Description
This 177-nucleotide RNA was probed chemically with DMS and 2A3. DMS adducts were read by reverse transcription with MarathonRT. High 2A3 reactivity points to a flexible backbone, as in loops and unpaired stretches. The RNA was probed in 150 mM KOAc, 10 mM MgCl2 and 150 mM bicine (pH 8.5) at 24 C.
[RMDB]
RNA sequence: GGGAACGACUCGAGUAGAGUCGAAAAUCGUCCCCACAUAGCAGUUUCCAGGACCCCCUUCCAAAAAGACUGAGGGGGGUGGCUAGGACGCAGGGGACCAGUGGAGCCGUGGGAUGCUCUUCCCAAUAUAUUUGUGUAAGUUCGCUUACACAAAUAUAAAAGAAACAACAACAACAAC
Reactivity to DMS in 0.01 (KOAc 150mM, MgCl2 10mM, bicine 150mM(pH8.5), 24C), signal-to-noise 2, nucleotides 027 to 126: u000c230g000u000c000c000c000c000a110c180a240u010a060g020c010a090g020u000u000u000c010c010a110g000g000a050c000c000c000c000c000u000u000c010c190a060a050a120a120a110g000a170c250u000g010a030g010g010g010g000g000g020u000g000g020c010u000a050g000g000a010c040g000c020a090g010g000g020g010a020c000c030a030g020u000g000g010a040g020c020c100g020u000g020g000g020a140u000g020c030u000c010u000u000c030c010c000a110a160u000
Reactivity to 2A3 in 0.01 (KOAc 150mM, MgCl2 10mM, bicine 150mM(pH8.5), 24C), signal-to-noise 1, nucleotides 027 to 126: u080c010g020u010c020c010c100c000a050c000a060u230a030g040c100a030g020u060u120u080c020c000a030g000g050a020c010c010c000c000c020u020u000c020c020a110a070a080a050a050g060a040c150u100g000a010g000g000g000g000g000g000u000g020g030c000u000a080g000g000a020c010g010c020a030g000g000g000g000a000c010c000a090g040u080g020g000a000g000c000c070g080u150g030g110g020a080u110g000c010u010c000u000u000c000c000c000a010a000u050